This 207-nucleotide RNA was probed chemically with 2A3 and DMS. The DMS profile rests on 8,207 reads. For 2A3, 5,653 sequencing reads were counted. The data come from the RNA Mapping Database (RMDB), library OK3TST.
RNA sequence: GGGAACGACUCGAGUAGAGUCGAAAAGGUAGCUAAGUUAAAAAUCCAGUGGCAGCAAACUCAGGCCCAAAUGCCCCCAUCAUGACUGGGGCUGAGGUCGCUCUCUUGGCCAUUGCUUCCUCUGCUUCAUAGCUUUAUGUAUGGGGCUUGUGGUCAACGUAAUGAUUAUCUUCGGAUAAUCAUUACGAAAAGAAACAACAACAACAAC
Reactivity to 2A3 in 0.01 (KOAc 150mM, MgCl2 10mM, bicine 150mM(pH8.5), 24C), signal-to-noise 5, nucleotides 027 to 156: g040g020u030a030g010c050u060a040a090g050u200u110a140a130a030a040a080u070c040c030a040g000u040g050g000c050a040g000c020a040a020a100c070u100c160a090g030g010c010c000c000a070a150a070u150g000c010c010c020c020c000a010u030c010a000u010g030a020c020u010g000g000g030g010c010u020g000a010g000g020u010c020g010c000u010c000u000c020u180u230g090g000c070c030a030u020u050g000c000u010u010c000c000u020c000u020g010c000u020u020c020a080u100a150g030c030u080u140u110a030u050g120u040a030u050g010g000g000g010c000u030u040g050u110g020g000u010c030a030a040
Reactivity to DMS in 0.01 (KOAc 150mM, MgCl2 10mM, bicine 150mM(pH8.5), 24C), signal-to-noise 3, nucleotides 027 to 156: g010g030u010a060g020c040u010a060a110g010u000u010a020a080a080a100a110u000c010c010a080g020u010g020g030c030a120g000c040a080a080a050c060u000c050a180g030g010c010c010c010a050a060a090u000g010c040c000c010c000c020a100u040c070a070u000g010a110c050u010g000g020g010g050c010u000g020a060g010g020u000c110g000c000u000c070u000c070u010u010g040g020c110c060a150u000u000g010c030u010u000c020c010u010c020u000g000c000u010u010c010a060u000a050g010c080u000u010u000a080u050g020u010a080u010g010g010g030g000c030u000u010g000u010g040g020u000c030a080a200